[RMDB]
RNA sequence: GGGAACGACUCGAGUAGAGUCGAAAACGCCUUGCAACAGGUCUUACUCUUAAUAAAUUGCUAUUUAAUUUAAUUACCGACCUGUUGCCAGCGGGUAUAGAUUAAAUAAGGCGGAAUUUAUUAAGAGCAAUUAUUAUUAGUUCGCUAAUAAUAAUUGAAAAGAAACAACAACAACAAC
Reactivity to 2A3 in 0.01 (KOAc 150mM, MgCl2 10mM, bicine 150mM(pH8.5), 24C), signal-to-noise 4, nucleotides 027 to 126: c060g040c000c010u010u030g000c000a000a000c000a010g000g000u010c020u070u130a040c000u010c000u000u000a000a010u000a010a020a020u090u130g020c010u020a050u040u040u020a040a040u030u050u110a090a110u110u080a030c020c040g010a010c000c000u000g000u000u000g010c000c000a020g030c080g030g010g000u020a070u050a090g020a010u060u040a030a010a020u070a080a080g150g010c070g080g020a010a010u010u010u000a010u010u000a000a000g000a000g000
Reactivity to DMS in 0.01 (KOAc 150mM, MgCl2 10mM, bicine 150mM(pH8.5), 24C), signal-to-noise 2, nucleotides 027 to 126: c190g010c020c020u000u020g000c030a030a010c020a010g010g000u030c040u050u030a190c000u000c010u000u010a000a000u010a010a000a010u010u030g000c030u000a030u000u020u010a010a040u000u000u000a060a090u020u000a050c090c030g020a010c000c020u000g000u010u010g010c020c080a070g010c150g000g010g020u000a030u020a040g010a030u010u000a010a000a020u000a040a100g020g010c100g030g000a080a060u000u000u000a000u000u010a020a010g000a030g010